Notes:
The data come from the RNA Mapping Database (RMDB), library TTRDEL. Structure probing data (DMS and 2A3) for a 177-nucleotide construct. The RNA was probed in 150 mM KOAc, 10 mM MgCl2 and 150 mM bicine (pH 8.5) at 24 C. 2A3 adducts were read by reverse transcription with SuperScript II with manganese. DMS adducts were read by reverse transcription with MarathonRT.
[RMDB]
RNA sequence: GGGAACGACUCGAGUAGAGUCGAAAAGAUAUGGAGUAGGAUAAAUCAAUGAACUACGCUAUCUCGGAAACGAGUAAGGCGCAUUGGAAUACUACUCCUAAGUCAAAGGUUCACUUCGGUGAACCAACCUCAUAUCAGGCUUCGGCCUGAUAUGAGGAAAAGAAACAACAACAACAAC
Reactivity to DMS in 0.01 (KOAc 150mM, MgCl2 10mM, bicine 150mM(pH8.5), 24C), signal-to-noise 1, nucleotides 027 to 126: g000a020u000a300u010g000g000a000g020u000a010g000g000a110u040a080a080a050u000c000a000a020u000g010a160a060c060u000a300c000g010c000u000a300u010c000u000c000g000g030a030a010a300c000g000a020g000u020a080a120g000g000c000g000c000a000u000u000g070g000a130a090u010a120c000u000a000c000u010c000c000u000a010a020g030u000c010a080a110a140g000g000u000u000c000a010c000u000u000c220g020g000u020g010a000a000c020c000a000a020
Reactivity to 2A3 in 0.01 (KOAc 150mM, MgCl2 10mM, bicine 150mM(pH8.5), 24C), signal-to-noise 1, nucleotides 027 to 126: g020a020u080a000u230g020g020a010g000u000a000g000g090a080u030a180a250a070u170c010a000a020u020g070a150a100c180u220a020c220g000c000u050a080u210c000u000c040g010g010a050a110a070c000g000a000g010u040a210a170g080g000c030g010c030a010u010u000g000g010a080a000u040a140c010u010a000c000u000c000c000u010a050a010g010u000c070a070a050a180g000g010u000u010c000a000c010u040u100c240g160g000u000g000a000a000c010c010a000a030